[RMDB]
RNA sequence: GGGAACGACUCGAGUAGAGUCGAAAAGAUAUGGAUUUGCGGGAGAAGCGUGUCCCCAGUCGCGAAUCGGAAACGAUUCGAACUACGACUGGGGAUGAAAACUUCGAAGAACGCAAAUCCUAAGUCACCUAAGAAUACACUUCGGUGUAUUCUUAGGAAAAGAAACAACAACAACAAC
Reactivity to DMS in 0.01 (KOAc 150mM, MgCl2 10mM, bicine 150mM(pH8.5), 24C), signal-to-noise 4, nucleotides 027 to 126: g000a040u020a300u010g000g000a000u000u000u000g000c000g010g000g000a040g000a040a000g020c100g010u010g010u000c000c010c000c000a010g000u000c000g020c000g010a040a000u010c000g000g000a160a160a230c000g020a010u010u000c000g000a060a100c170u010a300c020g000a010c010u000g010g000g000g000a000u000g000a030a100a160a080c020u000u000c000g000a080a130g000a120a230c000g000c000a010a000a020u000c000c000u000a020a130g010u010c040a190
Reactivity to 2A3 in 0.01 (KOAc 150mM, MgCl2 10mM, bicine 150mM(pH8.5), 24C), signal-to-noise 1, nucleotides 027 to 126: g020a030u110a060u250g010g010a000u000u000u010g010c010g000g020g010a080g000a030a000g040c110g050u300g040u100c010c010c000c010a000g010u010c020g000c020g050a000a000u000c020g020g010a080a070a030c010g020a010u030u000c000g010a120a070c160u240a060c100g000a010c010u000g000g000g000g000a000u000g000a000a000a000a010c000u000u000c010g140a230a020g040a030a000c000g000c000a020a000a000u010c000c000u000a040a010g030u040c020a020
Chemical mapping of a 177-nucleotide RNA with DMS and 2A3. For DMS, 4,530 sequencing reads were counted.